Conditions: 150 mM KOAc, 10 mM MgCl2 and 150 mM bicine (pH 8.5), 24 C. This 177-nucleotide RNA was probed chemically with 2A3 and DMS.
[RMDB]
RNA sequence: GGGAACGACUCGAGUAGAGUCGAAAACUCAGAUGGACUAUGUGCUGUAAGGCACAUACGAAAGAGGAAUUCCUAGUAAGUGUGUAUCAACAAUGGAUAUUGAAUAAGUCCCUGUAGCUUGUACACAUUACAUCCCAUGUUUCGACAUGGGAUGUAAAAAAGAAACAACAACAACAAC
Reactivity to 2A3 in 0.01 (KOAc 150mM, MgCl2 10mM, bicine 150mM(pH8.5), 24C), signal-to-noise 8, nucleotides 027 to 126: c010u010c020a030g080a220u100g040g030a030c020u000a000u000g000u000g000c010u030g120u260a080a080g050g000c000a000c000a000u010a000c000g040a030a050a020g030a000g010g050a040a100u030u020c000c000u040a100g090u170a120a130g020u010g000u010g010u020a030u200c020a010a030c020a040a020u080g020g020a030u080a080u160u230g130a180a140u220a190a040g030u010c020c010c030u050g070u140a020g010c060u010u000g000u000a000c000a000c000a010
Reactivity to DMS in 0.01 (KOAc 150mM, MgCl2 10mM, bicine 150mM(pH8.5), 24C), signal-to-noise 8, nucleotides 027 to 126: c030u000c000a110g030a210u010g010g000a300c300u010a010u000g010u000g010c000u000g000u060a140a110g000g000c010a000c000a000u010a010c030g020a160a130a060g000a050g020g000a140a160u000u000c000c010u000a070g030u020a050a110g020u010g010u000g000u000a000u050c050a030a020c030a090a060u020g010g000a020u010a110u020u030g010a130a100u040a090a130g000u000c010c000c130u010g010u020a100g010c240u000u000g010u000a000c010a010c020a070
Values cover nucleotides 27 to 126.